[RMDB]
RNA sequence: GGGAACGACUCGAGUAGAGUCGAAAAGAUAUGGACGCCAAGUUGCACGGUCGUUGAAAUCGGAAACGAUGGAGACCGUGACCCAACGACGCGUCCUAAGUCAAAGCAAUCCGUUCGCGGAUUGCAAUCCCUUGCAUAACUUCGGUUAUGCAAGGGAAAAAGAAACAACAACAACAAC
Reactivity to DMS in 0.01 (KOAc 150mM, MgCl2 10mM, bicine 150mM(pH8.5), 24C), signal-to-noise 3, nucleotides 027 to 126: g000a090u000a300u000g010g000a020c030g040c000c030a120a300g010u000u000g020c020a020c000g040g000u000c000g000u030u030g010a090a130a020u000c010g000g000a120a080a110c010g000a010u000g010g010a110g000a030c020c010g050u000g000a060c250c220c080a010a000c000g000a300c300g010c000g000u000c000c000u000a020a060g000u020c010a060a130a060g000c000a010a000u000c000c000g000u000u030c190g000c020g000g010a010u000u000g000c000a050a040
Reactivity to 2A3 in 0.01 (KOAc 150mM, MgCl2 10mM, bicine 150mM(pH8.5), 24C), signal-to-noise 1, nucleotides 027 to 126: g010a020u060a040u140g010g000a000c000g020c020c010a050a040g010u010u010g000c000a000c030g000g000u030c050g170u300u070g030a040a050a000u010c010g010g000a040a030a020c020g000a010u010g040g010a030g000a030c000c000g000u000g000a040c040c000c010a020a000c000g050a020c010g010c010g000u000c000c010u000a010a000g000u010c050a120a060a000g000c010a010a000u000c020c020g000u050u080c300g020c040g150g000a000u000u010g020c000a000a010